An RNA of 177 nucleotides, treated with DMS and 2A3 and read out base by base. Conditions: 150 mM KOAc, 10 mM MgCl2 and 150 mM bicine (pH 8.5), 24 C. DMS adducts were read by reverse transcription with MarathonRT. It was measured as part of the RMDB library TTRDEL. For 2A3 the reverse transcriptase was SuperScript II with manganese.
[RMDB]
RNA sequence: GGGAACGACUCGAGUAGAGUCGAAAAGAUAUGGAGCGUGCGAACAUAUGACCCGUUGAAAUCGGAAACGAUGGAGGGUUCAUAUGGAGGUAUACGCUCCUAAGUCAAACACUCCUUCGGGAGUGAACCAAUAUAAAUGGUUCGCCAUUUAUAUUGGAAAAGAAACAACAACAACAAC
Reactivity to DMS in 0.01 (KOAc 150mM, MgCl2 10mM, bicine 150mM(pH8.5), 24C), signal-to-noise 7, nucleotides 027 to 126: g000a040u000a300u000g000g000a010g020c020g030u000g010c070g000a120a230c000a000u000a010u000g010a030c010c000c000g020u000u010g000a080a120a020u000c000g000g000a140a080a160c000g010a010u000g000g010a080g010g000g000u010u000c010a000u000a010u000g000g000a010g010g010u010a090u010a040c010g020c000u000c000c000u000a010a070g000u000c020a150a150a230c010a010c000u000c010c000u000u010c190g030g010g010a020g010u000g010a050a170
Reactivity to 2A3 in 0.01 (KOAc 150mM, MgCl2 10mM, bicine 150mM(pH8.5), 24C), signal-to-noise 6, nucleotides 027 to 126: g040a020u070a030u170g000g000a010g000c010g000u040g020c070g070a150a020c030a010u000a000u000g000a010c010c000c010g110u190u040g020a020a020a010u000c000g000g040a100a040a040c020g010a010u020g030g020a020g020g010g020u100u060c000a000u010a000u010g010g020a020g000g070u300a110u010a150c010g010c000u000c000c000u000a010a000g010u000c010a020a090a040c010a010c000u010c000c000u040u120c300g150g000g000a000g000u010g000a020a040